[RMDB]
RNA sequence: GGGAACGACUCGAGUAGAGUCGAAAAGAUAUGGAUGCCUGUAGGGAGCUCAGGUGUCGGAAACGACACCGAGCAUCGAUCUAUUGGCAUCCUAAGUCAAAGCGUGCUCAGUUCGCUGAGCACGCAACUUAUACUAAUAGUUCGCUAUUAGUAUAAGAAAAGAAACAACAACAACAAC
Reactivity to DMS in 0.01 (KOAc 150mM, MgCl2 10mM, bicine 150mM(pH8.5), 24C), signal-to-noise 4, nucleotides 027 to 126: g000a040u000a110u010g000g000a000u000g010c000c010u000g020u000a000g030g010g000a180g030c000u000c010a110g030g010u000g020u000c000g010g000a020a030a070c000g010a010c000a010c000c000g000a000g010c000a120u010c300g000a140u010c000u000a010u000u000g000g010c000a000u000c000c000u000a000a060g000u000c010a120a110a190g010c010g020u010g000c000u000c010a010g010u000u020c270g030c000u000g010a000g000c000a000c000g010c000a010a020
Reactivity to 2A3 in 0.01 (KOAc 150mM, MgCl2 10mM, bicine 150mM(pH8.5), 24C), signal-to-noise 4, nucleotides 027 to 126: g000a000u020a010u060g000g000a000u000g000c000c030u030g010u020a010g040g100g140a220g030c010u010c130a180g010g000u010g000u010c000g010g010a020a010a010c000g010a000c000a010c010c000g000a000g000c010a020u200c180g130a240u010c010u000a010u010u020g000g000c000a000u000c000c000u000a010a000g000u000c030a090a110a060g000c020g000u010g020c020u000c030a030g040u100u150c300g060c180u000g000a000g000c000a000c020g000c000a000a010
Background
Structure probing data (DMS and 2A3) for a 177-nucleotide construct. 2A3 adducts were read by reverse transcription with SuperScript II with manganese. Reactivities are given for positions 27 through 126. For DMS, 9,035 sequencing reads were counted. Source: RMDB library TTRDES, as collected in RNAgym.